Chemical mapping of a 177-nucleotide RNA with DMS and 2A3.
DMS adducts were read by reverse transcription with MarathonRT.
High DMS reactivity at an A or C suggests that its Watson-Crick edge is free.
For 2A3, 2,997 sequencing reads were counted.
It was measured as part of the RMDB library TTRDEL.
RNA sequence: GGGAACGACUCGAGUAGAGUCGAAAAGAUAUGGACUAGUCUUUUGACGGAAUUGAUAUCGGAAACGAUAUUGGUUCCGAUAAGACUACAUGUCCUAAGUCAAAACAUAAACCUUCGGGUUUAUGAACGCAUUCAUAGUGUUCGCACUAUGAAUGCGAAAAGAAACAACAACAACAAC
Reactivity to DMS in 0.01 (KOAc 150mM, MgCl2 10mM, bicine 150mM(pH8.5), 24C), signal-to-noise 2, nucleotides 027 to 126: g000a010u000a300u020g000g000a000c040u000a010g010u000c000u010u000u010u010g030a230c090g010g000a010a000u000u000g020a010u000a000u010c000g010g000a150a120a180c000g030a000u000a000u010u000g000g000u000u000c010c000g000a060u000a010a010g000a020c000u000a030c300a130u000g020u010c010c000u010a050a080g010u000c040a090a050a110a170c010a020u000a000a000a020c000c010u000u030c210g010g010g030u000u000u010a000u000g000a100a070
Reactivity to 2A3 in 0.01 (KOAc 150mM, MgCl2 10mM, bicine 150mM(pH8.5), 24C), signal-to-noise 2, nucleotides 027 to 126: g020a010u120a070u150g000g010a010c030u020a020g020u000c030u140u120u080u180g250a160c070g010g000a010a000u020u030g020a000u000a000u010c010g020g000a010a120a040c030g010a000u000a020u000u000g000g010u020u040c000c000g010a010u020a030a000g000a000c000u040a020c060a110u180g020u000c000c010u000a100a010g040u030c040a030a000a000a140c000a020u010a030a000a000c000c000u020u040c300g130g030g000u000u020u020a020u030g040a060a020

The RNA was probed in 150 mM KOAc, 10 mM MgCl2 and 150 mM bicine (pH 8.5) at 24 C.